[RMDB]
The record gives the reactivity of an RNA of 207 nucleotides to 2A3. It was measured as part of the RMDB library ARCHII. For 2A3 the reverse transcriptase was SuperScript II with manganese.
RNA sequence: GGGAACGACUCGAGUAGAGUCGAAAAUGGGCCGCGGGGAUGAGAUCCACGGACUAGCAUUCUGCGUAUCUUGUCGCUUCUAAGCGCAGAGUGCGAAACCUAAAGGAAUGCGACUGAGCAUGGAGUCUCUUUUCUGACACCAAUUUCGGACGCGGGUACUUGUGAGUGAGUUCGCUCACUCACAAGUAAAAGAAACAACAACAACAAC
Reactivity to 2A3 in 0.01 (KOAc 150mM, MgCl2 10mM, bicine 150mM(pH8.5), 24C), signal-to-noise 2, nucleotides 027 to 156: u110g040g030g020c060c050g020c020g010g000g010g020a010u090g050a060g030a080u030c040c000a010c060g010g010a000c010u030a030g000c000a000u000u000c010u040g000c010g040u070a120u150c120u080u300g100u120c080g100c070u130u020c040u170a100a010g000c000g000c000a010g000a000g000u000g000c000g000a060a000a000c000c000u110a140a040a000g050g020a080a040u060g000c000g100a070c130u090g030a000g040c050a000u040g040g020a080g020u010c000u040c000u130u070u050u130c070u020g010a030c020a010c020c000a060a150u140u070u090c080g030g020a000c000g000c030g080g040g000u010